The record gives the reactivity of an RNA of 177 nucleotides to 2A3 and DMS. Source: RMDB libraries RFM100 and RFMREP, as collected in RNAgym.
RNA sequence: GGGAACGACUCGAGUAGAGUCGAAAAUUUGGGACCGGAUCCUCAGCCCCCAGCCCCCCGGGACUCAUCAGGAUCGGGCCUUUCGCAAGACUUGAGUUCCGACCUUUUUCGAGCUGGCCAAAGCCGGAAGUACCUGUAGAUUCGUCUACAGGUACUUAAAAGAAACAACAACAACAAC
Reactivity to 2A3 in 0.01 (KOAc 150mM, MgCl2 10mM, bicine 150mM(pH8.5), 24C), signal-to-noise 5, nucleotides 027 to 126: u140u070u060g010g010g040a070c030c000g050g020a030u040c000c010u040c010a050g010c020c000c000c010c000a020g030c010c000c000c000c010c000g010g000g030a050c010u030c050a100u060c050a080g030g030a080u020c000g040g010g010c000c000u050u050u030c040g010c050a080a060g040a110c010u020u020g000a000g040u110u040c020c000g020a040c010c000u060u080u020u040u130c060g020a030g020c000u020g040g000c040c070a100a040a010g020c020c000g010g010
Reactivity to DMS in 0.01 (KOAc 150mM, MgCl2 10mM, bicine 150mM(pH8.5), 24C), signal-to-noise 5, nucleotides 027 to 126: u030u050u030g010g000g010a080c010c030g020g020a090u010c030c010u010c180a100g000c040c000c020c010c070a120g030c010c010c000c000c020c110g040g000g010a060c020u010c050a070u010c170a030g000g010a090u010c020g000g010g000c000c020u010u010u010c040g000c130a120a110g000a020c100u010u000g020a060g010u010u020c020c000g020a300c040c020u000u000u010u010u020c060g010a090g020c030u000g000g020c060c140a070a070a100g010c000c020g000g000